Structure probing data (DMS and 2A3) for a 177-nucleotide construct. For DMS the reverse transcriptase was MarathonRT. It was measured as part of the RMDB library OK2TRN. For 2A3, 4,405 sequencing reads were counted. Conditions: 150 mM KOAc, 10 mM MgCl2 and 150 mM bicine (pH 8.5), 24 C.
[RMDB]
RNA sequence: GGGAACGACUCGAGUAGAGUCGAAAACUUGGCCGUCCUCAAGGUCGACAACGUCGACAAUCUGACCGUGGCCCGGCUCGGUGAUUCCAGCAAGGUACGGGUCGGUGACGAAGUCCUCGCGGUCGGCGGUCUUAGAUGAGUUCGCUCAUCUAAGACCAAAAGAAACAACAACAACAAC
Reactivity to DMS in 0.01 (KOAc 150mM, MgCl2 10mM, bicine 150mM(pH8.5), 24C), signal-to-noise 3, nucleotides 027 to 126: c060u000u000g030g010c000c010g000u020c010c020u000c100a110a110g020g010u000c010g010a050c040a130a160c140g000u000c020g000a060c060a100a070u020c060u000g010a070c030c010g000u000g010g030c090c010c080g020g010c010u000c030g030g010u010g020a140u000u000c030c010a180g020c180a110a050g010g010u020a060c000g010g000g020u010c010g000g000u000g030a070c070g000a130a170g030u000c040c030u000c020g020c090g000g010u000c010g000g000c200
Reactivity to 2A3 in 0.01 (KOAc 150mM, MgCl2 10mM, bicine 150mM(pH8.5), 24C), signal-to-noise 3, nucleotides 027 to 126: c020u040u070g080g000c000c020g030u060c020c000u090c080a060a060g090g020u020c010g030a010c010a300a110c160g020u010c000g060a040c050a080a140u050c030u040g020a030c000c000g010u030g070g000c000c000c000g000g010c010u010c050g000g070u150g110a150u200u120c010c000a010g130c130a250a150g000g010u040a030c010g030g000g040u010c020g020g020u120g020a010c030g030a070a010g020u040c000c040u040c010g000c000g000g000u010c000g000g020c090